[RMDB]
RNA sequence: GGGAACGACUCGAGUAGAGUCGAAAAGAUAUGGAAUACUUAGUACAUGGAACUACGCUAUCUCGGAAACGAGUAAGGCGCCAUGGAACAGUAUUCCUAAGUCAAAAGCAUCUGUUCGCAGAUGCAAUCUUACUGCACACUUCGGUGUGCAGUAAGAAAAAGAAACAACAACAACAAC
Reactivity to 2A3 in 0.01 (KOAc 150mM, MgCl2 10mM, bicine 150mM(pH8.5), 24C), signal-to-noise 1, nucleotides 027 to 126: g020a020u100a030u220g000g020a000a010u010a000c000u000u000a000g000u030a010c000a000u020g000g070a140a120c170u240a030c300g000c010u020a020u230c030u010c000g030g050a040a130a050c010g000a020g020u030a300a290g070g000c000g000c020c000a010u010g000g000a000a000c000a000g020u000a000u000u000c010c010u000a040a010g020u030c000a090a000a000a200g030c000a000u000c020u000g100u140u300c300g000c200a020g000a000u030g000c010a010a010
Reactivity to DMS in 0.01 (KOAc 150mM, MgCl2 10mM, bicine 150mM(pH8.5), 24C), signal-to-noise 2, nucleotides 027 to 126: g020a070u000a300u010g010g020a030a000u000a010c000u000u010a050g000u000a200c040a030u000g000g000a160a040c070u020a300c050g020c000u000a280u000c000u000c000g020g000a140a040a140c010g020a010g030u020a190a110g000g000c000g020c010c000a000u000g020g000a160a050c090a030g000u000a030u000u000c000c000u000a010a020g010u000c080a070a070a110a130g010c000a010u000c000u000g000u000u000c240g000c000a000g000a010u000g000c000a050a020